[RMDB]
Chemical mapping of a 177-nucleotide RNA with 2A3 and DMS.
DMS (dimethyl sulfate) methylates the pairing face of unpaired adenines and cytosines.
The data come from the RNA Mapping Database (RMDB), library RFM100.
The 2A3 profile rests on 3,752 reads.
2A3 adducts were read by reverse transcription with SuperScript II with manganese.
Conditions: 150 mM KOAc, 10 mM MgCl2 and 150 mM bicine (pH 8.5), 24 C.
For DMS, 3,789 sequencing reads were counted.

RNA sequence: GGGAACGACUCGAGUAGAGUCGAAAAAGCUAGUAGCAUAUACGUAUGCUACUAGCAGACCUCUAAGUCUAGAACCCCUCUGAUUCAGGAUUCUCUGAGUCAGGAUUCUAGGCUUAGAGGUCAUAAAGUGUUAUUGCCAAUUCGUUGGCAAUAACACAAAAGAAACAACAACAACAAC
Reactivity to 2A3 in 0.01 (KOAc 150mM, MgCl2 10mM, bicine 150mM(pH8.5), 24C), signal-to-noise 4, nucleotides 027 to 126: a000g000c000u000a000g000u010a000g010c030a000u010a000u010a020c220g070u010a000u000g000c000u000a010c000u010a000g000c000a000g000a000c000c000u000c000u000a000a010g000u020c000u000a000g010a040a030c020c000c000c060u160c040u060g010a000u000u010c000a010g130g160a300u300u030c180u030c000u070g000a000g000u000c000a000g000g000a000u020u010c000u010a000g000g000c000u000u000a010g000a000g010g000u000c000a000u000a000a050a010
Reactivity to DMS in 0.01 (KOAc 150mM, MgCl2 10mM, bicine 150mM(pH8.5), 24C), signal-to-noise 2, nucleotides 027 to 126: a040g010c000u000a010g000u000a010g000c030a000u000a040u040a020c260g070u010a030u000g000c000u000a010c010u000a010g020c000a010g000a000c000c000u000c000u020a000a000g010u000c000u000a000g010a020a050c080c090c140c100u040c060u000g000a020u000u000c000a010g010g010a300u040u010c130u060c000u020g000a010g000u030c000a020g000g000a120u010u000c000u000a000g000g010c000u000u000a020g000a000g010g000u000c010a000u010a070a090a090